Chemical mapping of a 207-nucleotide RNA with 2A3. It was measured as part of the RMDB library OK3TST. The reactions ran in a buffer of 150 mM KOAc, 10 mM MgCl2 and 150 mM bicine (pH 8.5), at 24 C. The 2A3 profile rests on 320 reads.
RNA sequence: GGGAACGACUCGAGUAGAGUCGAAAACGAUAUCUCUGAAUAUGAUCCAAAGAGUCUCCGAGAUCAUAUUGGAUAUGUUGAACAACAGCCAUACAUCUUUGAUUCAACACUCGAAGAUAACAUUCGAUAUGGAAACGUCUCAGCAACUGAAGAGGAAUGCAAGGAGUCAGUUCGCUGACUCCUUGCAAAAAGAAACAACAACAACAAC
Reactivity to 2A3 in 0.01 (KOAc 150mM, MgCl2 10mM, bicine 150mM(pH8.5), 24C), signal-to-noise 1, nucleotides 027 to 156: c000g080a020u030a000u050c000u000c030u040g100a030a010u000a000u000g040a000u070c080c070a110a290a040g130a150g170u120c040u100c090c070g120a120g000a100u000c000a000u020a020u110u100g010g010a050u080a040u240g010u000u000g040a020a020c040a030a000c000a020g070c000c000a000u000a100c010a040u000c030u030u050u000g080a060u240u100c010a190a040c030a000c150u000c030g000a010a000g000a010u030a030a030c040a220u190u210c080g020a010u010a030u220g000g000a040a040a040c090g030u000c060u020c130a010g020c020a030a100c110u100g010a000a000g060a000g050g000a030a030